Record summary: This 207-nucleotide RNA was probed chemically with 2A3 and DMS. The reactions ran in a buffer of 150 mM KOAc, 10 mM MgCl2 and 150 mM bicine (pH 8.5), at 24 C. As a SHAPE reagent, 2A3 marks flexible, mostly unpaired nucleotides at the ribose 2'-OH. 2A3 adducts were read by reverse transcription with SuperScript II with manganese. For DMS the reverse transcriptase was MarathonRT.

[RMDB]
RNA sequence: GGGAACGACUCGAGUAGAGUCGAAAAGUAUCAAGGAGGUGCAGCAGUUCAACCAGGUGGCCAAGGCCUACCAGGACCGCUAUCAGGACCUGGGGGCCUACAGUUCUGCCAGGAAGUGCCUGGCCAAACAGAGGCAGAGGAUGCUGCAAGAGAGAAACAGUAUAAAUGGCUUCGGCCAUUUAUACUGAAAAGAAACAACAACAACAAC
Reactivity to 2A3 in 0.01 (KOAc 150mM, MgCl2 10mM, bicine 150mM(pH8.5), 24C), signal-to-noise 1, nucleotides 027 to 156: g000u000a020u200c060a010a040g070g030a000g020g120u030g030c010a040g000c000a030g010u030u080c010a080a050c000c010a030g030g080u050g030g000c050c000a000a040g020g020c000c000u070a300c060c010a000g010g010a030c000c000g010c110u190a200u300c160a110g040g010a070c000c000u000g000g000g000g000g000c000c000u010a000c000a000g000u000u040c000u020g010c000c000a000g030g050a120a090g110u030g130c020c050u000g020g000c000c000a010a000a000c010a030g050a060g040g020c020a000g010a030g050g000a000u060g010c040u030g000c000a000a000g010a000g020a000g000a130a050a030
Reactivity to DMS in 0.01 (KOAc 150mM, MgCl2 10mM, bicine 150mM(pH8.5), 24C), signal-to-noise 1, nucleotides 027 to 156: g010u010a080u000c060a090a120g000g020a080g000g020u010g000c030a070g060c030a100g030u020u000c040a120a090c010c060a100g010g040u010g020g060c000c040a070a020g030g020c010c010u000a060c020c000a040g050g000a120c000c000g040c110u000a210u000c120a070g060g000a090c000c000u000g020g020g020g050g020c000c000u000a010c060a120g020u000u000c020u000g000c010c020a090g000g000a100a130g010u010g010c010c040u000g040g010c050c000a010a050a040c020a110g000a100g010g010c020a040g010a130g000g000a120u010g000c000u010g000c050a080a040g000a160g020a130g000a150a110a190